[RMDB]
RNA sequence: GGGAACGACUCGAGUAGAGUCGAAAAGAAGAAAAAGAAAUACGCGAGCCACGGAAAAGCCGGUCACCGUGGAGCGAAAUAAACGGUCAAAGAAGACCGGCAGGGCUGAAGAAAAACUUCAGCCAAAGAUUAAUCAUUAUUUCGAUAAUGAUUAAUCAAAAGAAACAACAACAACAAC
Reactivity to 2A3 in 0.01 (KOAc 150mM, MgCl2 10mM, bicine 150mM(pH8.5), 24C), signal-to-noise 5, nucleotides 027 to 126: g070a050a020g060a010a120a030a020a000g150a040a140a030u180a040c020g010c010g020a040g050c010c000a000c000g000g010a020a080a070a000g000c000c000g000g000u000c000a010c020c000g000u000g010g010a010g010c010g060a110a090a020u190a040a110a020c070g030g040u050c070a010a020a170g100a180a020g000a050c000c000g000g000c000a000g030g010g000c000u000g000a000a000g020a030a080a060a080a050c000u010u000c000a000g010c000c000a010a000a000
Reactivity to DMS in 0.01 (KOAc 150mM, MgCl2 10mM, bicine 150mM(pH8.5), 24C), signal-to-noise 1, nucleotides 027 to 126: g030a140a150g030a150a000a040a020a050g010a040a130a060u000a090c000g020c000g000a060g020c000c000a000c010g000g000a210a050a040a040g000c030c000g000g020u000c000a160c000c000g040u000g000g000a060g000c000g000a010a130a140u010a130a150a240c040g020g050u010c120a070a120a240g040a160a110g010a000c000c000g040g000c080a140g000g000g000c000u000g000a000a000g000a090a100a090a150a090c000u010u000c000a010g000c000c000a020a000a050